[RMDB]
RNA sequence: GGGAACGACUCGAGUAGAGUCGAAAACGAGGGGUGGGCGAAAGUUGCCAUGAGAACGUAACUUUCGUAGUCAUUGAUAAAGGGGCAGGUCUCGCUCUUUUGUCAUUGCGGUUGCCUAGAGGCAUGGAAAACCAUGACAGGUUCGCCUGUCAUGGAACUCUUGGAGAGACUUCGGUCUCUCCAAGAGAAAAGAAACAACAACAACAAC
Reactivity to 2A3 in 0.01 (KOAc 150mM, MgCl2 10mM, bicine 150mM(pH8.5), 24C), signal-to-noise 1, nucleotides 027 to 156: c060g020a090g000g070g000g080u260g030g000g000c040g000a010a000a000g000u010u000g010c040c030a050u120g080a070g010a190a000c000g000u000a000a010c000u010u000u030c010g030u000a030g040u020c010a010u010u000g000a000u000a000a000a000g000g000g030g000c030a020g060g170u130c130u180c180g020c000u000c000u000u020u020u010g000u020c020a020u000u090g050c070g030g000u040u030g000c000c010u090a090g020a160g030g000c040a080u100g010g020a130a000a020a040c000c000a000u000g000a010c000a000g010g010u030u040c180g090c040c000u000g000u000c000a000u000g000g010a000a000